[RMDB]
RNA sequence: GGGAACGACUCGAGUAGAGUCGAAAAAUGCAACUGGCGCACCUGGGCAUCGCCGUGUGCGCCAUCGGCAUCGUCCUCAGCAGCCAGUACAGCGCCCAGCGUGACCUGCGCAUGUCGCCCGGCGACAUACGCGAGUCACUUUCGAGUGACUCGCGUAAAAAGAAACAACAACAACAAC
Reactivity to DMS in 0.01 (KOAc 150mM, MgCl2 10mM, bicine 150mM(pH8.5), 24C), signal-to-noise 3, nucleotides 027 to 126: a010u010g010c000a130a070c110u000g000g010c010g000c010a070c060c070u000g040g010g000c130a150u020c250g020c000c020g000u000g000u000g020c030g000c010c010a000u010c200g000g000c000a020u010c090g000u000c010c000u000c110a140g020c060a100g000c020c040a080g020u000a070c100a120g000c070g020c020c010c020a080g050c100g020u010g010a070c110c040u000g000c040g030c080a030u000g000u000c010g030c010c050c090g030g000c010g020a030c040a080
Reactivity to 2A3 in 0.01 (KOAc 150mM, MgCl2 10mM, bicine 150mM(pH8.5), 24C), signal-to-noise 2, nucleotides 027 to 126: a000u070g020c020a050a030c070u000g010g050c010g000c000a010c060c030u090g040g020g040c100a220u180c180g020c060c010g050u050g000u030g030c000g050c000c000a010u010c000g030g000c000a030u010c020g020u000c000c000u070c010a000g050c020a030g030c030c040a030g000u090a080c060a110g030c030g000c050c020c020a030g060c020g020u030g050a120c000c020u090g000c050g030c030a050u050g010u000c020g020c060c120c050g180g000c010g020a000c020a050